[RMDB]
RNA sequence: GGGAACGACUCGAGUAGAGUCGAAAACACAACUGCGAAGGGGGGACGGAGAAGGCUAUGUUGGCCGGGCGACGGUUGUCCCGGUUUAUGCGUGUAGGCUGGUUUUCCAGGCAAAUCCGGAAUUGAACAUAGAUCCGGGAUUCGUCCCGGAUCUAUGAAAAGAAACAACAACAACAAC
Reactivity to DMS in 0.01 (KOAc 150mM, MgCl2 10mM, bicine 150mM(pH8.5), 24C), signal-to-noise 1, nucleotides 027 to 126: c070a020c090a080a030c060u020g000c120g010a080a090g000g000g000g000g010g000a110c040g000g000a070g020a060a090g000g000c050u000a010u000g000u010u020g000g000c000c020g010g010g020c300g000a060c100g000g020u020u000g010u010c010c020c010g000g010u000u010u000a020u000g000c040g000u000g000u000a080g020g000c030u010g000g010u000u010u030u000c010c000a130g000g000c050a040a090a110u000c010c020g030g010a030a080u010u020g010a070a120
Chemical mapping of a 177-nucleotide RNA with DMS.
Source: RMDB library M2PK90, as collected in RNAgym.
The RNA was probed in 150 mM KOAc, 10 mM MgCl2 and 150 mM bicine (pH 8.5) at 24 C.
Values cover nucleotides 27 to 126.
For DMS the reverse transcriptase was MarathonRT.